This 207-nucleotide RNA was probed chemically with DMS and 2A3.
Reactivities are given for positions 27 through 156.
DMS adducts were read by reverse transcription with MarathonRT.
Conditions: 150 mM KOAc, 10 mM MgCl2 and 150 mM bicine (pH 8.5), 24 C.
The 2A3 profile rests on 1,767 reads.
Reactivities are rounded to 0.1 and cut off at 0 and 3.
The data come from the RNA Mapping Database (RMDB), library ARCHII.

RNA sequence: GGGAACGACUCGAGUAGAGUCGAAAAGAGGGUAGCCAAUCACGUAAAUCCAAAGCUGCAAAUUAUCAGUUGCCAAUGAUGACAACUACGGUGCUCAACUAGCUGCGUAAGUAGCUUUUUGUUACACCAUCUAGCGGUACGCCGCUAGCGGUUUUUAGUGUAGCUGUAUGUUCGCAUACAGCUACACAAAAGAAACAACAACAACAAC
Reactivity to DMS in 0.01 (KOAc 150mM, MgCl2 10mM, bicine 150mM(pH8.5), 24C), signal-to-noise 1, nucleotides 027 to 156: g020a140g040g020g020u010a140g010c010c000a190a120u010c080a030c090g000u000a050a040a060u000c070c040a040a140a110g020c040u010g030c050a040a110a110u010u000a090u020c060a070g020u000u000g010c000c010a070a080u000g030a080u000g010a020c010a010a100c010u010a050c030g020g040u000g000c010u000c040a050a040c050u010a010g040c000u010g020c000g000u020a140a140g040u000a000g020c010u030u010u010u010u020g010u020u000a030c010a020c010c000a150u020c020u000a030g000c000g000g020u020a080c250g050c090c020g010c010u010a020g020c070g040g000u000u000u000u000u010a160
Reactivity to 2A3 in 0.01 (KOAc 150mM, MgCl2 10mM, bicine 150mM(pH8.5), 24C), signal-to-noise 3, nucleotides 027 to 156: g100a010g010g040g010u050a030g030c020c030a040a090u180c060a060c130g060u090a080a010a050u110c060c030a090a060a000g020c030u070g010c050a070a030a170u180u170a140u170c100a020g020u050u060g010c040c030a110a060u200g070a060u110g030a080c030a020a020c030u110a030c130g050g000u020g020c030u010c040a000a010c010u000a000g000c000u020g030c010g030u090a120a200g010u010a030g010c000u010u020u000u010u000g000u010u030a010c010a010c000c010a010u040c010u010a000g000c020g020g000u020a050c170g030c040c000g000c000u000a010g000c070g050g000u000u010u020u020u100a040